Conditions: 150 mM KOAc, 10 mM MgCl2 and 150 mM bicine (pH 8.5), 24 C.
The record gives the reactivity of an RNA of 207 nucleotides to 2A3 and DMS.
2A3 adducts were read by reverse transcription with SuperScript II with manganese.
DMS (dimethyl sulfate) methylates the pairing face of unpaired adenines and cytosines.
DMS adducts were read by reverse transcription with MarathonRT.
High 2A3 reactivity points to a flexible backbone, as in loops and unpaired stretches.
[RMDB]
RNA sequence: GGGAACGACUCGAGUAGAGUCGAAAAAAGCCUCUGUUCGAAAUCAUCGGGAGUGAUCCAGAUGACGGUCCUGCCAUGAGACUGCAACGAGAGCAUGUCGCAUCGAAUGGACUCGGGGAGUCGGCAGUGUAGUGGGGAUGGUUCGCCAUCCCCACAAUCAUAGAUUAUCGUUCGCGAUAAUCUAUGAAAAAGAAACAACAACAACAAC
Reactivity to 2A3 in 0.01 (KOAc 150mM, MgCl2 10mM, bicine 150mM(pH8.5), 24C), signal-to-noise 3, nucleotides 027 to 156: a000a010g100c040c010u060c040u050g100u090u220c040g040a080a060a050u030c010a000u000c030g000g000g010a030g060u150g060a130u020c000c000a030g010a030u030g040a030c030g000g020u000c010c000u010g010c000c000a020u030g010a000g000a040c020u010g010c010a100a080c190g150a070g020a020g230c030a050u220g030u010c000g000c040a030u020c100g040a030a040u010g000g010a020c030u030c150g000g000g020g010a040g070u030c010g020g000c030a050g010u070g080u300a170g010u000g020g010g020g000a000u030g000g060u060u070c160g030c070c000a000u000c000c000c000c000a000c000a000a000
Reactivity to DMS in 0.01 (KOAc 150mM, MgCl2 10mM, bicine 150mM(pH8.5), 24C), signal-to-noise 2, nucleotides 027 to 156: a070a070g020c040c020u000c020u000g050u000u000c040g000a050a190a030u010c020a000u000c020g030g020g000a050g000u010g000a280u000c020c000a030g010a010u000g000a030c020g000g000u000c010c000u000g010c170c040a100u000g010a030g030a000c010u000g010c030a080a300c090g000a160g010a300g020c020a040u000g010u020c010g000c020a060u000c020g000a120a180u010g020g000a060c010u000c050g000g010g000g020a120g040u000c020g020g040c020a190g020u000g040u000a120g030u000g010g000g010g030a050u000g020g000u000u000c120g020c050c000a030u000c000c000c000c000a010c000a000a190